Structure probing data (DMS and 2A3) for a 177-nucleotide construct.
RNA sequence: GGGAACGACUCGAGUAGAGUCGAAAAACUAAUUAUAAGCCUAGUAAGUUAGCGAAGCUUGGAUGAGGUUCGCAACUCACGUACGAAAUACGGAAUCUCCGUCGGUCUCAAGCCAUUUUUGCUACAACUCAAGCUCCAAAUUCGUUUGGAGCUUGAGAAAAGAAACAACAACAACAAC
Reactivity to DMS in 0.01 (KOAc 150mM, MgCl2 10mM, bicine 150mM(pH8.5), 24C), signal-to-noise 1, nucleotides 027 to 126: a060c040u060a130a040u000u000a090u000a050a130g030c040c050u010a230g000u030a070a090g000u050u000a070g000c000g000a000a160g010c050u030u000g000g090a070u000g030a030g000g000u000u060c040g010c040a030a140c000u070c110a050c000g000u030a020c080g000a020a020a170u000a070c000g000g010a090a070u000c090u020c020c120g050u000c000g000g020u000c010u010c050a090a010g050c030c050a010u020u000u000u000u000g020c020u040a010c130a150a080
Reactivity to 2A3 in 0.01 (KOAc 150mM, MgCl2 10mM, bicine 150mM(pH8.5), 24C), signal-to-noise 3, nucleotides 027 to 126: a000c010u010a000a080u210u050a090u130a270a050g060c000c020u020a030g080u070a140a050g060u110u070a020g010c020g010a010a000g070c000u060u030g120g060a110u190g080a080g060g030u140u090c000g000c030a000a010c030u030c030a070c020g020u050a000c080g130a020a200a000u150a010c020g000g100a020a100u080c070u000c040c030g010u020c030g000g040u000c010u000c040a050a110g040c000c030a020u000u000u000u060u030g040c020u030a070c050a050a040
2A3 adducts were read by reverse transcription with SuperScript II with manganese.
It was measured as part of the RMDB library OK1LIB.
The RNA was probed in 150 mM KOAc, 10 mM MgCl2 and 150 mM bicine (pH 8.5) at 24 C.
The DMS profile rests on 1,248 reads.
DMS adducts were read by reverse transcription with MarathonRT.